About this RNA: The data come from the RNA Mapping Database (RMDB), library M2RFPK. The record gives the reactivity of an RNA of 207 nucleotides to DMS and 2A3. For 2A3, 1,335 sequencing reads were counted.
[RMDB]
RNA sequence: GGGAACGACUCGAGUAGAGUCGAAAACGACUCAAUACGUCCCCGUCGUCCAGAAUGGUAACAUAUCUCUCCAAAUAUCUGAGCUUGGGUAUACGGGGAAACCCAACCCCUUGGGAAGAUUGGGUAUAAAAGGAGCGAUCCUUCGGGAUCGCUCCAACACUUAUACCAUCUUCGGAUGGUAUAAGUGAAAAGAAACAACAACAACAAC
Reactivity to DMS in 0.01 (KOAc 150mM, MgCl2 10mM, bicine 150mM(pH8.5), 24C), signal-to-noise 1, nucleotides 027 to 156: c060g000a060c020u000c010a050a130u010a070c050g000u000c020c010c000c060g060u000c080g000u010c010c010a100g000a180a110u020g010g000u000a100a160c050a060u000a070u000c020u000c030u000c060c010a110a140a100u000a060u020c040u000g000a140g000c060u000u020g030g010g010u010a100u000a060c120g050g020g070g060a130a060a030c020c010c000a020a060c020c000c020c010u000u020g040g010g030a190a090g010a060u000u000g020g000g040u010a090u000a020a020a180a180g020g000a030g050c000g040a060u020c000c000u000u000c270g060g020g000a010u000c000g040c000u000c000c010a020a010
Reactivity to 2A3 in 0.01 (KOAc 150mM, MgCl2 10mM, bicine 150mM(pH8.5), 24C), signal-to-noise 3, nucleotides 027 to 156: c060g030a000c010u010c050a070a090u100a140c020g090u020c020c010c010c000g030u020c000g020u040c000c010a030g070a130a150u130g050g030u130a150a080c070a100u190a180u070c030u000c020u020c050c020a100a170a200u140a110u060c060u080g020a040g050c040u080u060g000g040g000u090a040u030a060c020g000g000g000g000a010a040a010c010c010c000a000a040c010c000c000c000u000u020g030g020g010a000a050g020a090u030u040g010g040g030u070a110u070a140a110a050a100g000g000a000g000c010g010a000u010c010c030u040u060c220g050g000g000a000u000c000g030c000u000c000c000a000a000

Values cover nucleotides 27 to 156.